[RMDB]
RNA sequence: GGGAACGACUCGAGUAGAGUCGAAAAUGUAAACCGCGCCCAGUUGGUCGACGAUCUCUUCAGCCUCGCCUGGAGUGGCGAUAUCGAAUAUGACAUGGCCCUGGGCAUUCUCGGCUAUCUGGAGCACUAUGAGGGAUUUAUUCGUAAAUCCCUCAUAAAAAGAAACAACAACAACAAC
Reactivity to DMS in 0.01 (KOAc 150mM, MgCl2 10mM, bicine 150mM(pH8.5), 24C), signal-to-noise 7, nucleotides 027 to 126: u030g010u020a050a120a160c070c040g020c180g010c000c000c010a020g000u030u030g010g010u000c020g010a110c140g000a080u010c010u010c080u010u000c100a120g000c120c200u010c080g010c040c000u000g000g010a120g020u020g010g000c040g000a050u020a040u020c070g000a070a060u020a060u030g000a030c090a100u040g000g000c000c010c020u010g010g000g010c050a020u010u010c060u010c010g010g000c000u010a060u020c030u000g000g020a110g010c080a100c160
Reactivity to 2A3 in 0.01 (KOAc 150mM, MgCl2 10mM, bicine 150mM(pH8.5), 24C), signal-to-noise 9, nucleotides 027 to 126: u140g050u080a050a050a080c050c020g060c030g030c050c010c020a050g030u160u170g040g000u000c010g050a120c040g030a180u030c020u010c030u060u020c010a020g010c040c090u120c080g030c040c000u070g060g050a110g050u100g070g010c060g010a020u030a040u150c050g030a090a070u210a110u220g070a050c090a110u140g010g000c020c000c010u010g000g000g020c000a000u010u000c010u000c020g030g000c010u030a050u170c030u060g070g040a060g030c020a010c060
Conditions: 150 mM KOAc, 10 mM MgCl2 and 150 mM bicine (pH 8.5), 24 C. The record gives the reactivity of an RNA of 177 nucleotides to DMS and 2A3. For DMS, 17,487 sequencing reads were counted.